[RMDB]
RNA sequence: GGGAACGACUCGAGUAGAGUCGAAAAAGACAUACGUUCGCGUAUGUCUGACGGGCACCUGACCCAAAGGAAAUGCUCUAUGACAGGACACACUGAUUGUGAUACCUCGAGAUUUCGAUCUCGAGAAUACUGAUAUUCGCUUCGGCGAAUAUCAGUAAAAAGAAACAACAACAACAAC
Reactivity to DMS in 0.01 (KOAc 150mM, MgCl2 10mM, bicine 150mM(pH8.5), 24C), signal-to-noise 3, nucleotides 027 to 126: a000g000a030c000a000u010a010c000g010u000u010c240g010c010g010u000a010u010g000u000c010u000g020a090c200g000g000g010c030a090c040c010u000g000a170c010c030c010a090a100a050g030g000a120a070a050u000g020c020u010c020u000a110u000g020a160c110a070g000g010a110c050a080c070a040c110u010g010a170u020u000g010u000g010a180u010a070c190c010u000c000g000a020g000a010u000u000u010c210g000a010u000c000u000c000g020a020g000a080a080
Reactivity to 2A3 in 0.01 (KOAc 150mM, MgCl2 10mM, bicine 150mM(pH8.5), 24C), signal-to-noise 1, nucleotides 027 to 126: a010g000a000c000a000u000a010c010g010u030u040c200g000c000g080u000a000u000g000u000c000u000g000a000c000g000g010g050c030a010c020c000u000g080a070c010c030c000a010a040a050g020g000a040a110a030u080g010c010u000c030u050a130u110g090a020c020a030g110g020a050c010a000c000a010c070u080g070a250u080u020g020u030g080a070u070a090c010c010u000c000g010a020g030a000u040u090u270c280g060a000u000c000u000c000g000a000g040a040a030
The record gives the reactivity of an RNA of 177 nucleotides to DMS and 2A3.
It was measured as part of the RMDB library M2PK50.
The RNA was probed in 150 mM KOAc, 10 mM MgCl2 and 150 mM bicine (pH 8.5) at 24 C.
The DMS profile rests on 1,546 reads.
Reactivities are given for positions 27 through 126.
2A3 adducts were read by reverse transcription with SuperScript II with manganese.
For 2A3, 1,193 sequencing reads were counted.